This 177-nucleotide RNA was probed chemically with 2A3 and DMS. The RNA was probed in 150 mM KOAc, 10 mM MgCl2 and 150 mM bicine (pH 8.5) at 24 C. For DMS, 1,791 sequencing reads were counted. 2A3 adducts were read by reverse transcription with SuperScript II with manganese.
RNA sequence: GGGAACGACUCGAGUAGAGUCGAAAAGAUAUGGACGUACAUGUGCAACAGCCAUUCACUCGGAAACGAGUGAUGGACAUGCACGUGUACGUCCUAAGUCAAACGCAGUUCGUUCGCGAACUGCGAAGGAUGCGUAUUUGUUCGCAAAUACGCAUCCAAAAGAAACAACAACAACAAC
Reactivity to 2A3 in 0.01 (KOAc 150mM, MgCl2 10mM, bicine 150mM(pH8.5), 24C), signal-to-noise 3, nucleotides 027 to 126: g020a010u070a030u130g020g000a000c000g010u020a010c010a010u000g010u020g000c200a300a120c100a300g010c050c000a040u230u300c020a040c020u010c000g040g000a090a070a040c010g000a000g010u020g010a000u000g000g030a030c030a130u210g000c000a010c000g000u010g000u000a000c000g000u010c000c000u000a010a000g000u010c010a010a020a010c010g000c020a000g000u000u010c030g050u090u150c300g000c020g110a000a000c010u010g000c000g000a040a030
Reactivity to DMS in 0.01 (KOAc 150mM, MgCl2 10mM, bicine 150mM(pH8.5), 24C), signal-to-noise 2, nucleotides 027 to 126: g010a050u000a300u010g000g000a010c020g040u020a000c000a020u010g040u000g000c020a090a080c300a220g030c000c000a010u030u020c000a010c000u000c000g000g000a130a080a120c000g020a020g030u000g000a020u000g000g000a020c050a300u000g020c020a000c020g060u000g000u050a000c020g000u010c000c010u000a000a070g000u000c030a120a160a300c000g000c000a020g010u000u000c000g030u000u010c230g030c000g030a000a030c000u000g000c000g000a010a030
Reactivities are given for positions 27 through 126. For DMS the reverse transcriptase was MarathonRT. For 2A3, 5,792 sequencing reads were counted.